[RMDB]
Source information
Structure probing data (DMS and 2A3) for a 170-nucleotide construct. The 2A3 profile rests on 9,890 reads. For 2A3 the reverse transcriptase was SuperScript II with manganese. The RNA was probed in 150 mM KOAc, 10 mM MgCl2 and 150 mM bicine (pH 8.5) at 24 C.

RNA sequence: GGGAACGACUCGAGUAGAGUCGAAAAUUGUACCCAACCAUUACGGUACCUGAAGAGUUCGCAAGUCAUGUUGCCAACUUCCAAAAAUCAGGUUAUAGUAAAUAUGUCACUGUUCAGGGACCACCUGUUAGUGUCCGUUUCGACGGACACAAAAGAAACAACAACAACAAC
Reactivity to DMS in 0.01 (KOAc 150mM, MgCl2 10mM, bicine 150mM(pH8.5), 24C), signal-to-noise 6, nucleotides 027 to 129: u040u070g020u060a140c000c000c000a200a110c160c060a130u040u020a040c180g030g030u010a020c050c020u010g010a070a100g000a110g000u000u000c300g030c050a020a110g010u020c300a110u000g020u030u020g010c020c070a060a020c040u020u050c130c220a020a020a060a150a220u030c030a030g030g000u030u050a070u060a110g020u060a110a050a060u000a000u030g040u020c040a060c060u040g040u000u020c040a040g000g000g010a080c050c150a000c080c010u030g020u000u030a060
Reactivity to 2A3 in 0.01 (KOAc 150mM, MgCl2 10mM, bicine 150mM(pH8.5), 24C), signal-to-noise 4, nucleotides 027 to 129: u090u070g030u100a090c000c020c000a000a040c010c010a080u040u100a010c050g080g000u000a020c000c000u000g010a040a040g000a030g050u000u020c020g000c010a030a000g010u210c070a080u130g070u100u010g000c020c020a000a000c000u070u010c040c040a040a080a000a000a050u030c010a020g010g000u010u050a060u040a020g030u040a010a070a100u250a070u140g070u040c040a050c110u010g010u100u020c000a000g010g050g090a150c000c050a060c010c000u050g020u050u060a020